RNA sequence: GGGAACGACUCGAGUAGAGUCGAAAAAGAGCAAAAAUAUUCUUGCCCACCUACACCGGCACCCUAACCUUGGGGAUCUACCAUUUGGUGUCAUUGCAAAAUUUGGACCCUAUGAACUUCCUAGUAAGCUUGUAUGUGUAUUCGUACACAUACAAGCAAAAGAAACAACAACAACAAC
Reactivity to DMS in 0.01 (KOAc 150mM, MgCl2 10mM, bicine 150mM(pH8.5), 24C), signal-to-noise 3, nucleotides 027 to 126: a070g010a210g000c060a020a030a080a100a070u010a080u000u010c050u000u000g000c020c020c020a110c060c020u000a080c080a070c060c050g000g030c040a070c020c010c030u000a090a090c160c070u000u010g010g020g010g000a110u000c040u000a070c060c020a070u000u000u010g020g020u000g000u010c060a040u000u000g000c090a080a040a050a100u000u020u010g010g000a080c020c020c030u000a100u010g020a060a090c100u010u010c010c010u000a060g020u000a080a150
Reactivity to 2A3 in 0.01 (KOAc 150mM, MgCl2 10mM, bicine 150mM(pH8.5), 24C), signal-to-noise 3, nucleotides 027 to 126: a000g060a000g010c070a070a080a010a080a090u140a160u160u050c030u030u030g010c000c020c010a010c000c010u040a020c010a010c010c040g050g000c040a040c020c010c020u030a070a070c020c060u050u080g020g000g000g030a030u050c040u080a060c000c000a050u040u030u150g060g000u050g030u020c030a070u030u190g050c060a040a000a080a240u080u080u080g020g010a050c000c000c020u050a060u110g030a050a030c030u020u030c010c000u040a050g070u110a170a030